RNA sequence: GGGAACGACUCGAGUAGAGUCGAAAAGAUUUUAGCUUGGUGUCCAACAGCGAUGGCAAACUGGGCGAUGAGGACUUGGAAAAGACACUAUAUGACUGCAAACUCAUUCCGAACACUCUGCUGCUGACCGGCAUAAUAUAUUCGUAUAUUAUGCCGGAAAAGAAACAACAACAACAAC
Reactivity to 2A3 in 0.01 (KOAc 150mM, MgCl2 10mM, bicine 150mM(pH8.5), 24C), signal-to-noise 4, nucleotides 027 to 126: g050a040u100u100u100u160a050g010c030u010u060g030g050u050g040u050c010c020a040a040c020a050g060c030g060a050u110g030g000c040a070a080a060c030u050g050g020g020c050g040a040u070g030a020g020g030a060c050u050u060g040g020a040a050a050a030g060a020c030a010c090u070a050u010a050u300g060a060c040u040g030c040a000a040a090c020u010c030a040u070u000c020c010g010a050a000c030a020c050u080c030u040g030c010u040g010c020u030g050a050
Reactivity to DMS in 0.01 (KOAc 150mM, MgCl2 10mM, bicine 150mM(pH8.5), 24C), signal-to-noise 5, nucleotides 027 to 126: g010a110u010u010u010u010a090g030c060u000u010g010g010u000g010u000c020c030a090a130c090a070g020c080g010a070u010g010g000c090a050a080a060c090u000g000g010g010c070g000a070u010g000a100g000g000a080c070u000u010g010g000a060a040a080a070g000a110c070a060c080u000a070u010a120u000g010a070c060u000g010c090a040a080a130c060u000c040a070u000u000c060c020g000a060a060c120a050c060u000c020u000g010c040u000g000c080u000g010a250

Chemical mapping of a 177-nucleotide RNA with 2A3 and DMS. For DMS, 5,245 sequencing reads were counted. High 2A3 reactivity points to a flexible backbone, as in loops and unpaired stretches. The RNA was probed in 150 mM KOAc, 10 mM MgCl2 and 150 mM bicine (pH 8.5) at 24 C.